[RMDB]
RNA sequence: GGGAACGACUCGAGUAGAGUCGAAAAGAUAGGGGGUUCGCCCCCUAUCAAAGGUGCAAUGUACUUUCUGCACCAAAGACCGAAAAACCGUCAAAGUACAAAAAACGAUGGCGUUCGCGCCAUCGAAGUAUUCUAAUUAGUUCGCUAAUUAGAAUACAAAAGAAACAACAACAACAAC
Reactivity to 2A3 in 0.01 (KOAc 150mM, MgCl2 10mM, bicine 150mM(pH8.5), 24C), signal-to-noise 3, nucleotides 027 to 126: g000a000u000a010g010g010g020g000g010u010u010c020g110c010c000c000c000c000u010a000u000c000a000a010a010g000g010u000g000c010a020a060u190g000u020a000c010u000u030u040c040u020g000c000a000c000c000a030a040a000g020a000c000c000g020a080a040a000a040a070c090c030g120u190c100a050a020a000g010u000a010c000a000a220a020a020a020a010c020g000a000u000g000g010c030g020u050u060c270g010c020g000c070c000a000u000c000g000a010a000
Reactivity to DMS in 0.01 (KOAc 150mM, MgCl2 10mM, bicine 150mM(pH8.5), 24C), signal-to-noise 3, nucleotides 027 to 126: g000a000u010a000g010g010g000g010g040u000u010c290g020c000c000c000c000c000u000a000u000c000a040a090a110g000g020u010g020c010a060a130u000g000u000a010c010u000u000u000c060u010g000c000a010c000c000a050a070a070g010a300c020c010g000a050a040a040a110a090c160c260g000u010c050a040a020a010g000u000a010c010a030a110a060a050a080a120c040g000a010u000g020g020c000g030u010u020c260g030c020g010c010c000a000u000c000g000a010a090
This 177-nucleotide RNA was probed chemically with 2A3 and DMS.
The reactions ran in a buffer of 150 mM KOAc, 10 mM MgCl2 and 150 mM bicine (pH 8.5), at 24 C.
DMS (dimethyl sulfate) methylates the pairing face of unpaired adenines and cytosines.
Values cover nucleotides 27 to 126.